Annotation
Conditions: 150 mM KOAc, 10 mM MgCl2 and 150 mM bicine (pH 8.5), 24 C. This 207-nucleotide RNA was probed chemically with DMS and 2A3. Reactivities are given for positions 27 through 156. For 2A3, 3,870 sequencing reads were counted. The data come from the RNA Mapping Database (RMDB), library RNAMAK.
RNA sequence: GGGAACGACUCGAGUAGAGUCGAAAAGCAUUCUUCGGAAUGCACCAAACCUUUGUGGGAUUGACGAAGUGUCUGGGAGGAGAUACAUCCCAUUGGGAUGAUCUCCGAAGAACAGACAUCGAAAUCCCACUCUGGUAAGUUAUUACUUCGGUAAUAACCACGUUAUCAACUUCGGUUGAUAACGUGGAAAAGAAACAACAACAACAAC
Reactivity to DMS in 0.01 (KOAc 150mM, MgCl2 10mM, bicine 150mM(pH8.5), 24C), signal-to-noise 1, nucleotides 027 to 156: g010c000a000u000u000c010u030u010c300g050g010a020a010u000g030c000a080c050c060a120a160a080c010c000u000u000u000g010u000g040g000g030a060u000u000g030a150c070g020a090a100g040u000g000u000c000u000g000g000g010a300g000g000a050g030a040u000a090c010a010u000c000c000c040a300u010u000g080g050g030a050u010g000a100u000c000u000c000c000g000a060a050g050a170a130c030a010g000a000c000a050u010c020g000a140a060a060u000c010c000c010a010c010u000c040u020g000g010u000a050a080g010u000u000a000u000u000a020c000u000u010c150g030g060u000a010a040u000a030a070
Reactivity to 2A3 in 0.01 (KOAc 150mM, MgCl2 10mM, bicine 150mM(pH8.5), 24C), signal-to-noise 3, nucleotides 027 to 156: g000c000a000u000u000c010u020u040c150g130g000a000a000u000g000c000a030c000c010a070a120a010c000c000u020u010u010g010u010g010g010g010a000u000u090g160a220c060g060a210a100g300u020g000u030c000u000g000g010g020a030g040g020a010g010a010u080a140c000a010u020c030c020c080a280u130u300g000g000g010a000u000g000a000u000c000u000c000c010g010a020a000g000a010a000c000a000g010a010c010a010u030c000g020a010a010a000u000c000c000c000a000c000u000c000u000g000g000u000a050a060g060u010u020a010u010u010a010c040u040u080c250g030g010u020a000a000u040a020a030